[RMDB]
RNA sequence: GGGAACGACUCGAGUAGAGUCGAAAAGUGCCACCUUCCAGCUGGAGCUGUCCCAGGAAGGUGUGACCGGGGAGUGGGCCCGGGGUGGAGUACAGCUGUAUCCAGGACCCAAGUGUCACAUCCACUCCUAUCUCCUCCAGUUCGCUGGAGGAGAUAGAAAAGAAACAACAACAACAAC
Reactivity to 2A3 in 0.01 (KOAc 150mM, MgCl2 10mM, bicine 150mM(pH8.5), 24C), signal-to-noise 2, nucleotides 027 to 126: g070u060g130c000c000a000c000c000u050u000c020c060a100g090c140u170g110g020a100g050c080u090g110u110c030c010c000a010g050g030a050a020g040g000u000g020u050g010a000c010c000g000g000g020g080a070g030u040g020g000g050c030c000c000g000g010g010g000u010g030g040a040g030u020a060c060a090g030c060u080g120u150a050u030c030c020a020g060g080a090c030c010c000a050a070g060u090g040u100c020a020c010a050u030c010c010a090c030u000c000
Reactivity to DMS in 0.01 (KOAc 150mM, MgCl2 10mM, bicine 150mM(pH8.5), 24C), signal-to-noise 3, nucleotides 027 to 126: g010u000g020c000c000a010c050c020u000u000c040c110a140g060c130u020g000g000a120g000c050u010g010u000c130c000c000a280g000g010a080a040g010g010u000g010u010g000a070c040c070g030g000g010g010a070g030u010g000g000g000c020c040c030g000g020g000g040u000g000g000a080g030u010a080c110a090g000c040u000g010u000a050u010c030c020a050g010g000a060c010c000c060a050a120g020u010g020u000c040a040c050a110u010c020c040a070c050u000c050